[RMDB]
RNA sequence: GGGAACGACUCGAGUAGAGUCGAAAACUCGUGGUUCCUGUGGUUCACACCUGACCUCCUGAGCAGAAAAGAAAAAAGAAGGCGGCUCGGAAGAGCGCUUCAGGGAUCCCCGGGGAAACCUGGAGCGGUUAGCAUUAAACUUCGGUUUAAUGCUAACAAAAGAAACAACAACAACAAC
Reactivity to 2A3 in 0.01 (KOAc 150mM, MgCl2 10mM, bicine 150mM(pH8.5), 24C), signal-to-noise 1, nucleotides 027 to 126: c000u020c020g050u080g040g010u000u050c000c000u020g050u090g080g000u140u110c100a020c040a020c080c030u040g050a080c010c000u010c000c030u050g000a030g020c030a010g160a080a150a090a000g150a020a180a020a070a010a020g060a060a020g090g040c070g080g010c030u020c010g040g020a070a040g020a060g140c020g000c000u010u000c000a000g000g000g000a010u020c000c010c030c010g240g050g000g000a010a030a000c000c000u020g000g010a000g010c040g000
Reactivity to DMS in 0.01 (KOAc 150mM, MgCl2 10mM, bicine 150mM(pH8.5), 24C), signal-to-noise 1, nucleotides 027 to 126: c020u000c050g020u010g020g000u000u000c000c020u000g020u010g030g030u000u010c110a110c070a090c090c020u000g010a100c060c010u000c000c020u020g020a120g000c040a170g010a090a060a080a100g010a010a020a080a060a170a070g000a130a090g010g010c090g010g010c060u000c040g000g010a080a080g000a130g000c030g010c000u000u000c000a020g020g010g000a220u000c010c000c060c160g000g010g010g010a030a060a210c020c000u000g010g000a010g000c000g030

Source: RMDB library VIROID, as collected in RNAgym. This 177-nucleotide RNA was probed chemically with 2A3 and DMS. For 2A3 the reverse transcriptase was SuperScript II with manganese. For DMS, 906 sequencing reads were counted.